[RMDB]
RNA sequence: GGGAACGACUCGAGUAGAGUCGAAAAGUAUGAAGGCAUGAUUGAAGCUGCAAAAGUAAACAAAGCCAUCGUAGCACACUGUGAAGAUAAUUCAUUAAUCUAUGGUGGUGCAAUGCAUGAAGGGAAAUCCUCAAGUUUCGUUCGCGAAACUUGAGGAAAAAGAAACAACAACAACAAC
Reactivity to DMS in 0.01 (KOAc 150mM, MgCl2 10mM, bicine 150mM(pH8.5), 24C), signal-to-noise 1, nucleotides 027 to 126: g000u000a070u000g010a170a230g000g020c020a000u000g000a030u030u000g000a030a300g040c020u000g010c080a000a070a110a150g030u000a010a020a160c130a020a160a200g000c010c000a000u000c000g000u000a020g050c150a150c100a060c270u000g040u000g000a060a010g000a170u000a030a180u000u000c050a030u010u000a010a010u000c000u000a000u000g000g020u000g000g010u000g020c110a000a040u010g000c120a100u000g000a050a040g020g000g000a020a100a060
Structure probing data (DMS) for a 177-nucleotide construct. The DMS profile rests on 533 reads.